[RMDB]
RNA sequence: GGGAACGACUCGAGUAGAGUCGAAAAAAUGAAGACGGUCAGUGGUAUACUGUAAAAGUUGUGAUUAACAUGUUCACUGCUGAAGGUUAUGUUAAACUGUCUUCUAAAGUUUACCAUGAUAACGACGAAAUCGCAGAAGAAUAUUUCAAUAAUAUGAUAACGAAUGAACGUUCGCGUUCAUUCGUUAAAAAGAAACAACAACAACAAC
Reactivity to DMS in 0.01 (KOAc 150mM, MgCl2 10mM, bicine 150mM(pH8.5), 24C), signal-to-noise 1, nucleotides 027 to 156: a150a030u000g000a130a070g000a040c040g030g000u010c120a150g000u010g000g010u000a070u000a070c000u000g010u000a100a080a020a090g040u000u000g000u000g010a150u010u000a070a050c070a090u000g010u010u000c020a070c000u000g000c100u000g020a210a160g020g000u000u000a050u000g000u000u000a070a030a050c040u010g000u000c020u110u010c040u000a050a020a040g000u000u000u000a090c020c000a100u000g050a110u000a040a160c020g030a240c040g000a040a070a300u010c050g070c040a080g000a160a160g010a050a090u000a050u000u000u030c000a070a100u030a050a060u000a080u020g000a160
Reactivity to 2A3 in 0.01 (KOAc 150mM, MgCl2 10mM, bicine 150mM(pH8.5), 24C), signal-to-noise 1, nucleotides 027 to 156: a000a030u050g010a020a000g000a020c040g010g020u100c040a060g060u000g000g090u110a100u060a110c040u140g060u070a000a000a040a130g000u000u070g080u000g010a040u070u100a020a050c030a010u100g030u010u110c040a040c140u070g020c080u110g050a010a030g000g050u070u010a000u100g030u000u110a060a000a020c010u030g000u040c000u040u010c000u080a110a000a000g000u000u070u000a140c000c000a020u080g030a030u100a070a020c010g060a000c040g070a160a000a000u040c060g030c080a040g080a130a000g000a010a010u060a030u080u120u020c010a000a000u200a300a020u140a020u140g050a060

Structure probing data (DMS and 2A3) for a 207-nucleotide construct. The reactions ran in a buffer of 150 mM KOAc, 10 mM MgCl2 and 150 mM bicine (pH 8.5), at 24 C. Reactivities are given for positions 27 through 156. It was measured as part of the RMDB library OK3TST.